RNA sequence: GGGAACGACUCGAGUAGAGUCGAAAACCAAGUUCAGUUAACAGACAAAUACUGCAGUGUUAAUGUAGUAGCUUGGCUUUACGCAGCAAUACUUAAUGGUUGCGCUUGGUUUGUAAAACCUAAUCGCGCAUAAGAUAGUCUUCGGACUAUCUUAUGCAAAAGAAACAACAACAACAAC
Reactivity to DMS in 0.01 (KOAc 150mM, MgCl2 10mM, bicine 150mM(pH8.5), 24C), signal-to-noise 8, nucleotides 027 to 126: c000c000a010a020g010u000u010c240a130g010u010u000a020a030c220a020g010a030c010a010a020a050u000a010c010u000g010c000a020g010u010g020u020u020a080a110u000g010u000a010g010u000a010g010c250u000u000g000g000c000u000u000u000a020c060g020c140a060g010c010a030a030u010a080c140u010u010a090a130u010g000g020u010u000g010c010g010c010u010u000g000g010u000u000u000g010u010a070a080a110a110c000c000u000a060a090u010c170g010c300
Reactivity to 2A3 in 0.01 (KOAc 150mM, MgCl2 10mM, bicine 150mM(pH8.5), 24C), signal-to-noise 9, nucleotides 027 to 126: c000c000a000a000g010u050u110c120a040g010u080u050a040a040c030a070g030a010c000a010a010a000u010a010c000u000g000c000a020g030u030g070u300u250a160a140u040g010u010a000g000u010a010g020c110u000u010g010g000c000u020u020u010a010c030g000c020a020g010c000a030a050u080a300c080u110u300a160a060u260g070g000u010u000g000c010g000c000u000u000g010g020u000u000u020g040u040a040a040a010a020c000c010u010a060a060u080c070g010c010

Annotation: Structure probing data (DMS and 2A3) for a 177-nucleotide construct. For 2A3 the reverse transcriptase was SuperScript II with manganese. DMS adducts were read by reverse transcription with MarathonRT.